[RMDB]
RNA sequence: GGGAACGACUCGAGUAGAGUCGAAAAUCAUGCACGUUCGCGUGCAUGAAAAGGCGGCGAGUAUCGCUCAGCGGCGCGCUACAGCCCGCAGCGCAGCUGGAAAAAGAUGAAUCUUCGGAUUCAUCAACGUUACCUACAUGUUCGCAUGUAGGUAACGAAAAGAAACAACAACAACAAC
Reactivity to DMS in 0.01 (KOAc 150mM, MgCl2 10mM, bicine 150mM(pH8.5), 24C), signal-to-noise 4, nucleotides 027 to 126: u000c000a000u000g010c000a000c000g020u010u020c180g040c010g030u010g000c010a000u010g000a010a060a060a090g010g010c050g000g010c030g000a140g010u010a050u010c060g010c010u000c040a040g010c010g010g010c080g010c010g010c060u010a090c090a120g010c060c020c040g020c080a040g010c000g020c010a060g030c030u000g000g010a040a060a050a100a110g000a010u000g000a020a000u000c000u000u010c190g020g000a020u000u000c000a000u000c020a050a090
Reactivity to 2A3 in 0.01 (KOAc 150mM, MgCl2 10mM, bicine 150mM(pH8.5), 24C), signal-to-noise 3, nucleotides 027 to 126: u030c000a000u000g000c000a000c010g010u040u040c190g030c000g110u000g000c000a000u000g020a000a010a010a020g080g010c030g010g000c060g090a060g080u110a080u210c030g000c040u030c030a000g010c000g120g010c030g000c000g010c080u070a050c010a050g060c020c030c000g000c020a030g000c030g000c010a050g000c000u030g030g070a070a090a010a010a020g000a000u000g000a000a000u000c010u050u090c220g060g000a000u000u000c000a000u010c010a000a020